[RMDB]
RNA sequence: GGGAACGACUCGAGUAGAGUCGAAAAUGUGGUUCGCCUCGCCAAAGCAUAAAUUUUAAAGAAAACGAGGAGAAGAAGGAACUCACCUGUCGUCGUCGACGAAGGCCGGUGAGAAAGGAGCUGCCAGCACCUUAUAAGUGUUCGCACUUAUAAGGUGAAAAGAAACAACAACAACAAC
Reactivity to DMS in 0.01 (KOAc 150mM, MgCl2 10mM, bicine 150mM(pH8.5), 24C), signal-to-noise 5, nucleotides 027 to 126: u000g030u000g000g020u000u000c020g000c010c010u000c020g040c030c080a080a100a180g020c130a100u010a060a060a170u010u010u010u010a060a110a160g000a080a080a100a110c040g010a010g010g000a030g000a060a100g000a100a070g020g020a090a170c010u000c010a000c000c010u010g040u000c000g010u000c020g010u000c260g010a100c050g000a020a020g000g010c010c040g000g000u000g010a010g000a000a020a030g000g000a070g000c030u000g010c010c130a130g010
Reactivity to 2A3 in 0.01 (KOAc 150mM, MgCl2 10mM, bicine 150mM(pH8.5), 24C), signal-to-noise 4, nucleotides 027 to 126: u110g010u050g010g010u010u010c000g010c000c010u010c010g010c030c040a120a060a020g040c020a080u200a140a130a140u180u170u120u220a220a270a050g130a070a100a000a010c020g010a000g000g020a010g030a030a010g050a020a060g120g020a030a020c000u000c000a000c010c000u000g000u000c000g010u010c000g060u060c110g090a300c040g010a050a020g010g030c010c010g010g000u000g000a000g000a000a000a000g000g000a010g010c010u010g060c040c000a050g020

This 177-nucleotide RNA was probed chemically with DMS and 2A3. DMS adducts were read by reverse transcription with MarathonRT. Conditions: 150 mM KOAc, 10 mM MgCl2 and 150 mM bicine (pH 8.5), 24 C. Source: RMDB library VIROID, as collected in RNAgym.